[RMDB]
RNA sequence: GGGAACGACUCGAGUAGAGUCGAAAAGGGGUCGUGUAGAGCGUUAUCAGGAGCUUGGAUUUAUGGGUCUGAAGCCUCCACGGACCCAUUGUCAGCUCCUGUAAGACGCUCAUACACGACGGAGGCACCCAAAGAACGCAUCUUCGGAUGCGUUCAACAUUCUAACGCAGUUCGCUGCGUUAGAAUGAAAAGAAACAACAACAACAAC
Reactivity to DMS in 0.01 (KOAc 150mM, MgCl2 10mM, bicine 150mM(pH8.5), 24C), signal-to-noise 1, nucleotides 027 to 156: g000g020g000g020u000c040g000u000g020u000a030g000a020g030c040g030u000u000a120u000c010a050g000g020a050g020c000u010u040g050g010a080u000u000u000a000u000g000g020g060u000c010u000g000a050a160g010c010c020u000c000c010a300c000g000g000a020c010c000c030a020u010u070g020u000c110a170g050c000u000c010c010u030g010u000a040a090g000a010c010g040c030u000c000a050u000a010c030a010c030g000a010c010g000g000a060g050g060c020a140c010c000c000a110a150a180g000a030a010c010g020c020a010u010c010u000u000c300g030g010a010u000g020c010g000u000u000c000a040a230
Reactivity to 2A3 in 0.01 (KOAc 150mM, MgCl2 10mM, bicine 150mM(pH8.5), 24C), signal-to-noise 2, nucleotides 027 to 156: g190g020g010g010u020c010g010u000g000u010a000g000a010g010c010g000u040u080a260u300c010a000g020g000a010g020c000u100u180g200g010a050u070u280u090a020u070g010g020g010u010c010u030g020a120a040g020c000c000u020c010c010a010c010g000g000a000c000c000c000a000u010u030g020u000c000a010g000c000u000c000c000u030g000u010a010a020g030a000c000g000c000u000c000a000u000a010c010a000c030g000a000c000g010g000a010g010g000c020a040c000c000c000a080a160a050g010a000a000c000g000c010a000u040c030u120u110c300g140g010a000u000g000c000g000u010u000c000a000a000
Notes
The record gives the reactivity of an RNA of 207 nucleotides to DMS and 2A3. The DMS profile rests on 2,142 reads. 2A3 adducts were read by reverse transcription with SuperScript II with manganese. DMS adducts were read by reverse transcription with MarathonRT. The reactions ran in a buffer of 150 mM KOAc, 10 mM MgCl2 and 150 mM bicine (pH 8.5), at 24 C.